[RMDB]
Source: RMDB library OK2TRN, as collected in RNAgym. Structure probing data (2A3 and DMS) for a 177-nucleotide construct.
RNA sequence: GGGAACGACUCGAGUAGAGUCGAAAACGGCAUAUGCAUCGAUAUAUUAAUCGGCCGUAAUAUCGCGGCAUCGAUUAGCUAUACGAUUAGCUACGCGGCGCUAUAUAAUCGUAAUAUUACGAUAUCGUCCUACGCUGUUGUUCGCAACAGCGUAGGAAAAAGAAACAACAACAACAAC
Reactivity to 2A3 in 0.01 (KOAc 150mM, MgCl2 10mM, bicine 150mM(pH8.5), 24C), signal-to-noise 2, nucleotides 027 to 126: c010g030g000c050a040u040a050u270g000c020a050u040c040g100a100u020a000u020a010u090u030a010a010u000c010g020g020c000c000g040u010a060a100u290a080u190c140g060c060g000g000c020a130u120c050g010a020u020u000a000g000c030u010a000u010a060c050g030a030u050u150a030g000c000u010a010c070g040c000g160g020c070g000c040u010a020u020a020u070a240a080u020c000g010u010a120a070u130a250u300u060a000c000g030a000u000a070u070c070g030
Reactivity to DMS in 0.01 (KOAc 150mM, MgCl2 10mM, bicine 150mM(pH8.5), 24C), signal-to-noise 2, nucleotides 027 to 126: c080g010g040c020a130u010a040u030g060c060a070u000c030g000a100u000a030u000a070u000u000a040a020u000c020g000g010c040c010g000u000a030a140u000a140u010c200g010c000g030g000c020a040u050c000g000a000u000u000a000g020c170u000a000u000a030c030g010a050u000u010a090g000c000u000a060c140g000c040g000g000c010g030c100u000a050u000a080u000a040a030u000c020g000u000a030a180u000a140u000u000a030c020g000a020u000a040u010c220g000
Background:
Conditions: 150 mM KOAc, 10 mM MgCl2 and 150 mM bicine (pH 8.5), 24 C. 2A3 adducts were read by reverse transcription with SuperScript II with manganese. For 2A3, 1,108 sequencing reads were counted. The DMS profile rests on 1,063 reads.